[RMDB]
RNA sequence: GGGAACGACUCGAGUAGAGUCGAAAAACAGAAAACAGCGAAACAGCGCCUAUGUUUUCUUUGAUGGCUCACAGCAAAUGUGUCCCCGACAAAGAGAACUCUUUGUCGAUUCCGAUACGGGCGCGUGUCACUAGCUACCUUUCGAGGUAGCUAGUGAAAAAGAAACAACAACAACAAC
Reactivity to 2A3 in 0.01 (KOAc 150mM, MgCl2 10mM, bicine 150mM(pH8.5), 24C), signal-to-noise 6, nucleotides 027 to 126: a000c070a010g030a010a020a000a000c020a020g110c070g120a160a040a010c050a040g030c000g020c010c000u050a070u070g010u000u030u010u000c040u050u050u100g190a170u100g040g000c020u020c030a020c010a010g080c040a070a110a230u070g010u000g020u030c000c000c000c000g010a010c000a000a010a000g040a010g090a210a160c110u010c000u030u020u010g000u010c000g010a020u090u060c050c020g050a030u040a180c040g020g000g000c000g000c010g010u030g040
Reactivity to DMS in 0.01 (KOAc 150mM, MgCl2 10mM, bicine 150mM(pH8.5), 24C), signal-to-noise 4, nucleotides 027 to 126: a090c100a060g010a040a020a040a030c040a050g010c130g010a140a120a070c140a090g000c000g000c020c040u040a090u000g010u000u000u010u010c010u020u030u020g020a160u030g000g020c120u020c010a020c040a030g020c150a050a050a090u010g000u010g010u010c060c060c050c010g000a010c000a000a000a010g000a030g030a120a070c180u000c050u000u010u010g000u000c010g000a110u030u020c050c030g020a140u040a080c180g020g010g000c010g010c010g000u000g000
Structure probing data (2A3 and DMS) for a 177-nucleotide construct.
The DMS profile rests on 6,772 reads.
The data come from the RNA Mapping Database (RMDB), library OK1LIB.
For 2A3 the reverse transcriptase was SuperScript II with manganese.